The record gives the reactivity of an RNA of 177 nucleotides to 2A3 and DMS. The reactions ran in a buffer of 150 mM KOAc, 10 mM MgCl2 and 150 mM bicine (pH 8.5), at 24 C. The DMS profile rests on 879 reads. Reactivities are given for positions 27 through 126. The 2A3 profile rests on 1,532 reads. It was measured as part of the RMDB library OK2TRN.
[RMDB]
RNA sequence: GGGAACGACUCGAGUAGAGUCGAAAAGUCCUCAAGACCGCGCCCAAAGGUCACAUUGCCGGCGACAAACCGUGCCUACCUGGCGGAGAGGUGCCCGUCGGCGGUGGUCACCAGGUGUAGUCGGGCACGUCAACGAACGGUUCGCCGUUCGUUGACGAAAAGAAACAACAACAACAAC
Reactivity to 2A3 in 0.01 (KOAc 150mM, MgCl2 10mM, bicine 150mM(pH8.5), 24C), signal-to-noise 1, nucleotides 027 to 126: g040u050c020c020u080c010a000a010g010a000c000c000g000c000g000c000c000c000a070a030a040g010g000u020c020a010c000a080u070u140g040c010c030g000g110c020g030a040c070a030a240a000c020c010g080u050g060c020c010u070a150c010c160u090g010g000c050g030g100a220g010a030g000g000u000g040c000c080c000g000u020c010g000g000c000g010g010u030g020g040u040c030a020c030c010a020g080g000u020g030u050a080g000u070c040g010g000g000c050a060
Reactivity to DMS in 0.01 (KOAc 150mM, MgCl2 10mM, bicine 150mM(pH8.5), 24C), signal-to-noise 2, nucleotides 027 to 126: g080u010c000c010u000c130a140a110g010a010c080c030g030c040g010c000c030c110a070a220a100g000g010u000c070a070c000a040u000u000g030c020c050g000g000c040g000a160c170a050a080a120c100c120g020u020g040c030c010u000a110c210c120u000g010g000c070g000g000a140g000a040g000g020u020g030c120c120c080g010u000c010g010g000c020g010g010u000g010g000u010c070a050c100c210a170g000g000u000g040u000a110g020u010c060g000g040g020c060a120